[RMDB]
RNA sequence: GGGAACGACUCGAGUAGAGUCGAAAAAUUCGCUGACGGCGGUUUCGCGCCGCGCGGAAAAGCUGAUGGCCGAUGGCGGAUCGAUUCUGACGCUGACCUAUUACGGCGCUGAAAAGGUCAUGCCGAAAUACUAAAUCGUGUUCGCACGAUUUAGUAUAAAAGAAACAACAACAACAAC
Reactivity to 2A3 in 0.01 (KOAc 150mM, MgCl2 10mM, bicine 150mM(pH8.5), 24C), signal-to-noise 4, nucleotides 027 to 126: a010u020u010c010g000c030u060g070a110c010g000g020c010g030g020u040u160u300c100g000c010g010c030c000g000c010g020c000g020g020a060a080a010a000g020c040u080g040a060u070g080g040c030c040g080a090u140g030g010c020g000g010a010u010c000g010a040u040u000c010u040g090a120c000g000c010u030g080a190c010c010u030a070u110u130a070c040g000g000c010g000c010u010g000a010a010a010a020g010g010u010c050a100u110g000c000c010g030a070a080
Reactivity to DMS in 0.01 (KOAc 150mM, MgCl2 10mM, bicine 150mM(pH8.5), 24C), signal-to-noise 7, nucleotides 027 to 126: a110u000u000c050g030c000u010g020a150c020g010g010c010g010g000u000u010u010c150g020c050g020c040c020g010c050g020c020g010g010a040a040a100a100g010c030u010g020a080u000g010g020c030c040g000a100u010g020g020c020g010g000a020u000c010g000a300u000u000c020u010g010a190c070g010c000u010g000a130c180c110u000a100u010u010a130c030g000g000c010g010c010u000g000a030a020a060a290g000g000u000c010a040u010g040c000c010g000a080a070